[RMDB]
RNA sequence: GGGAACGACUCGAGUAGAGUCGAAAAUCAACAACAGGGUAGCAUCUGCAUAUAGAGGUCAUUGCAUGGUCAGGCUGAGUGGAUUCAAGAUCAAGCCAGCAUCAAGGACUGACGGCUGUCCAGUCAGCCUAGAUAUCGUUUUCGAACGAUAUCUAGGAAAAGAAACAACAACAACAAC
Reactivity to 2A3 in 0.01 (KOAc 150mM, MgCl2 10mM, bicine 150mM(pH8.5), 24C), signal-to-noise 4, nucleotides 027 to 126: u050c010a010a070c010a010a020c010a050g050g000g050u030a010g010c020a040u060c040u110g030c070a050u150a020u050a180g100a030g030g030u040c020a050u020u110g030c040a020u060g020g070u120c040a020g040g000c010u020g020a030g070u100g080g010a070u110u080c070a090a040g050a180u060c020a020a010g020c010c010a010g030c010a040u070c040a050a060g050g010a020c020u030g020a010c010g040g020c010u030g030u020c000c010a000g050u020c020a000g010
Reactivity to DMS in 0.01 (KOAc 150mM, MgCl2 10mM, bicine 150mM(pH8.5), 24C), signal-to-noise 9, nucleotides 027 to 126: u000c050a080a080c090a060a060c070a080g000g000g020u000a070g010c050a070u010c050u000g010c090a060u010a090u010a080g010a240g010g010u010c040a060u000u000g010c070a080u010g010g010u010c090a080g010g020c020u000g000a080g010u010g010g000a080u000u010c130a080a090g010a100u000c060a090a090g010c020c010a070g010c060a060u000c110a060a080g000g010a090c030u000g000a080c070g000g010c060u010g010u000c030c020a070g000u000c050a060g000
The data come from the RNA Mapping Database (RMDB), library OK2TRN. Chemical mapping of a 177-nucleotide RNA with 2A3 and DMS. DMS adducts were read by reverse transcription with MarathonRT. For 2A3 the reverse transcriptase was SuperScript II with manganese. For 2A3, 27,960 sequencing reads were counted. High DMS reactivity at an A or C suggests that its Watson-Crick edge is free.